Source information: Chemical mapping of a 177-nucleotide RNA with 2A3 and DMS. The reactions ran in a buffer of 150 mM KOAc, 10 mM MgCl2 and 150 mM bicine (pH 8.5), at 24 C.
RNA sequence: GGGAACGACUCGAGUAGAGUCGAAAAGAUAUGGAUCAUUAAGGCUUUUGACGUCGUACCCAUUCGGAAACGAAUGGACGACGAUAAGCCUGAUGAUCCUAAGUCAAAACUGGCGUUCGCGCCAGAAGUGUAGCUUAACCUUCGGGUUAAGCUACACAAAAGAAACAACAACAACAAC
Reactivity to 2A3 in 0.01 (KOAc 150mM, MgCl2 10mM, bicine 150mM(pH8.5), 24C), signal-to-noise 2, nucleotides 027 to 126: g000a000u040a030u150g000g000a020u000c000a020u060u110a290a070g020g000c070u050u150u190u300g300a170c060g040u040c000g000u060a190c000c030c000a000u010u000c000g020g040a020a060a130c000g000a010a020u000g010g000a000c000g000a000c000g020a020u010a030a000g000c000c010u010g010a000u000g000a010u000c000c000u000a050a020g040u030c050a020a000a150a200c000u000g000g000c020g010u060u080c300g000c000g000c190c000a010g050a010a040
Reactivity to DMS in 0.01 (KOAc 150mM, MgCl2 10mM, bicine 150mM(pH8.5), 24C), signal-to-noise 2, nucleotides 027 to 126: g050a080u000a300u020g020g010a000u000c000a000u000u000a040a020g000g010c000u020u000u030u000g010a300c110g000u010c000g000u000a210c300c000c000a000u000u000c020g010g000a190a110a190c010g010a050a000u000g010g000a050c000g000a020c040g000a040u000a020a020g020c000c000u010g010a000u000g020a020u000c000c000u030a030a100g000u000c020a060a060a100a100c010u030g000g010c020g000u000u000c300g010c000g000c000c000a000g020a020a130
As a SHAPE reagent, 2A3 marks flexible, mostly unpaired nucleotides at the ribose 2'-OH.